[RMDB]
RNA sequence: GGGAACGACUCGAGUAGAGUCGAAAACGAUAUAAGAUGCUUUUAACUCAUUAUGACUCUUAUCAUAUGCUUGAAACGUAUGCUCUGGUGCAUAGCCACUUGCGCCACGAUGUGCGAUAGUAGUGAACGUGGUCAAGCACUUCGGUGCUUGACCACGAAAAGAAACAACAACAACAAC
Reactivity to 2A3 in 0.01 (KOAc 150mM, MgCl2 10mM, bicine 150mM(pH8.5), 24C), signal-to-noise 1, nucleotides 027 to 126: c060g030a020u120a000u110a200a080g080a180u240g090c140u000u100u100u000a090a010c070u000c110a030u000u070a020u110g070a000c060u000c000u020u080a000u070c020a060u040a140u220g020c000u060u060g050a110a000a000c000g000u000a000u060g000c000u000c000u030g010g000u030g000c000a060u000a100g000c000c000a090c240u230u000g000c090g000c000c030a030c170g000a000u030g040u000g000c000g080a080u010a140g030u060a040g030u000g070a000a000
Source information
An RNA of 177 nucleotides, treated with 2A3 and read out base by base. The 2A3 profile rests on 398 reads. The reactions ran in a buffer of 150 mM KOAc, 10 mM MgCl2 and 150 mM bicine (pH 8.5), at 24 C.